[RMDB]
RNA sequence: GGGAACGACUCGAGUAGAGUCGAAAAUCAACGACGUGGCUUCAGGGCCUGACACUCGAAUUGUCGGCCUCUCCCGACGCAACUGCAGUUCUGCGGAGGGGAAACGCGUGACAGACGUGAUUUGAGGGAUUGUCGUCCUGGUGUGCAGCGGUGGCUCAUCAUGCGUUUAUUUCGAUAAACGCAUGAUAAAAGAAACAACAACAACAAC
Reactivity to 2A3 in 0.01 (KOAc 150mM, MgCl2 10mM, bicine 150mM(pH8.5), 24C), signal-to-noise 3, nucleotides 027 to 156: u090c000a030a030c010g100a010c020g040u040g030g020c030u120u100c120a090g030g030g000c030c060u100g010a000c010a010c020u090c040g070a200a140u120u090g000u030c000g000g030c000c010u000c010u010c010c010c000g020a010c010g000c010a050a110c090u260g030c130a100g040u120u130c070u080g000c030g010g010a030g010g010g000g000a010a050a050c040g010c020g020u040g070a050c030a080g120a040c030g070u060g080a120u040u040u090g050a060g030g030g010a050u040u120g040u030c030g010u020c000c020u030g030g000u040g030u050g020c040a020g030c020g020g010u020g030g000c030u040c040
Reactivity to DMS in 0.01 (KOAc 150mM, MgCl2 10mM, bicine 150mM(pH8.5), 24C), signal-to-noise 2, nucleotides 027 to 156: u000c040a060a070c090g020a010c050g020u000g000g010c050u000u000c090a110g020g010g030c010c000u010g000a070c040a050c070u010c070g010a070a150u010u010g000u000c000g020g030c020c010u000c030u000c000c000c000g030a210c020g050c020a070a050c080u000g000c050a150g020u010u010c020u000g060c070g030g010a270g000g010g000g000a000a040a040c040g000c030g010u000g000a080c080a090g000a060c030g040u010g010a100u010u000u010g010a080g000g000g020a160u000u000g000u000c060g010u000c050c020u000g010g020u010g040u000g020c040a070g010c020g000g010u000g010g000c060u020c070
An RNA of 207 nucleotides, treated with 2A3 and DMS and read out base by base.
Values are in units of 0.01, from 0 to 300, in steps of 10.
Source: RMDB library OK3TST, as collected in RNAgym.
The RNA was probed in 150 mM KOAc, 10 mM MgCl2 and 150 mM bicine (pH 8.5) at 24 C.